[RMDB]
RNA sequence: GGGAACGACUCGAGUAGAGUCGAAAAACUAAAUUGAAUCAAACUAGCUUAUUUCUUGCGUGUCUGUCCGCUGGAGGUAAGUGAAAUUAAAGACCAGACUAAACGUGUAGUGCUGAAGAUGGAGUAAUUUCGGACGGGGGUUCAAAUCCCCCCAGCUGACGCAUUACAUGUUCGCAUGUAAUGCGUCAAAAGAAACAACAACAACAAC
Reactivity to 2A3 in 0.01 (KOAc 150mM, MgCl2 10mM, bicine 150mM(pH8.5), 24C), signal-to-noise 1, nucleotides 027 to 156: a000c100u170a060a040a140u210u110g140a040a100u150c140a070a060a050c060u030a050g020c000u010u000a010u000u050u000c010u020u040g010c000g000u030g010u030c060u080g050u050c000c000g000c030u040g000g000a000g030g010u000a000a000g020u010g000a040a020a020u130u130a090a020a050g030a090c060c070a020g000a000c040u060a020a040a210c060g010u050g060u070a080g000u040g050c010u020g020a060a010g010a030u070g040g000a090g080u100a070a120u060u130u100c030g020g010a010c000g030g010g000g010g000u030u120c000a000a090a080u020c000c000c010c040c030c000a000g010c080u020